[RMDB]
RNA sequence: GGGAACGACUCGAGUAGAGUCGAAAAGAUAUGGACGUGCUACCCACCGAACUACAGCAAACAAUCGGAAACGAUUGGUAGCUGCGAGGCACGUCCUAAGUCAAAGGGCGCUGUUCGCAGCGCCCAAGUUCUUCCCAUCGUUCGCGAUGGGAAGAACAAAAGAAACAACAACAACAAC
Reactivity to DMS in 0.01 (KOAc 150mM, MgCl2 10mM, bicine 150mM(pH8.5), 24C), signal-to-noise 1, nucleotides 027 to 126: g020a110u030a200u000g020g000a010c020g030u000g000c000u000a050c000c010c020a300c050c000g000a070a050c040u000a290c030a050g040c020a030a150a300c000a030a000u000c000g000g000a100a020a180c000g010a000u000u000g000g000u000a230g010c010u000g000c040g020a100g020g000c010a000c030g030u000c000c000u000a010a040g000u000c100a050a060a130g000g020g010c010g000c070u010g050u010u020c100g000c030a030g030c000g040c010c000c000a000a000